[RMDB]
RNA sequence: GGGAACGACUCGAGUAGAGUCGAAAAGGACACGUUGGGAAACGGUAAUGUUAGACGGCUUCCCGUUUGAAAUUGGCGUUAUGCACAAAUCGCAAUGUAGCGACCAAAAAGAUUUAAACGGAACAGGAAUGGAACACCUUACGGCUACUAUGGUCGAUCGUGUCAAUUGUUUCGACAAUUGACACGAAAAAGAAACAACAACAACAAC
Reactivity to DMS in 0.01 (KOAc 150mM, MgCl2 10mM, bicine 150mM(pH8.5), 24C), signal-to-noise 2, nucleotides 027 to 156: g000g000a080c020a020c110g030u000u000g040g040g000a170a030a120c030g030g020u000a070a090u000g000u010u000a120g000a090c060g000g010c080u000u000c060c000c020g030u010u000u000g000a030a120a210u000u000g000g010c020g000u000u000a100u000g000c030a130c060a040a140a140u010c140g050c000a190a090u030g020u000a120g010c020g030a100c010c030a040a020a090a080a140g000a200u010u000u000a090a060a100c010g010g010a060a070c010a060g010g000a030a170u010g010g000a030a070c060a080c020c010u000u000a060c070g000g000c020u020a060c040u000a110u000g000g010u000c020g000a110
Reactivity to 2A3 in 0.01 (KOAc 150mM, MgCl2 10mM, bicine 150mM(pH8.5), 24C), signal-to-noise 4, nucleotides 027 to 156: g030g000a010c020a010c150g030u070u000g040g010g070a030a060a060c050g000g060u100a110a040u160g030u050u040a070g040a060c020g010g000c040u050u000c020c010c010g000u030u040u030g090a100a110a070u030u030g000g000c000g030u030u040a060u110g040c050a020c040a090a120a070u170c140g010c040a040a060u240g020u060a040g000c000g040a290c000c030a030a040a010a020a030g120a000u100u100u110a040a010a000c030g010g000a020a030c030a090g050g020a010a040u050g010g060a060a060c040a030c030c000u040u060a030c010g010g010c000u070a120c030u050a120u150g040g000u000c020g030a020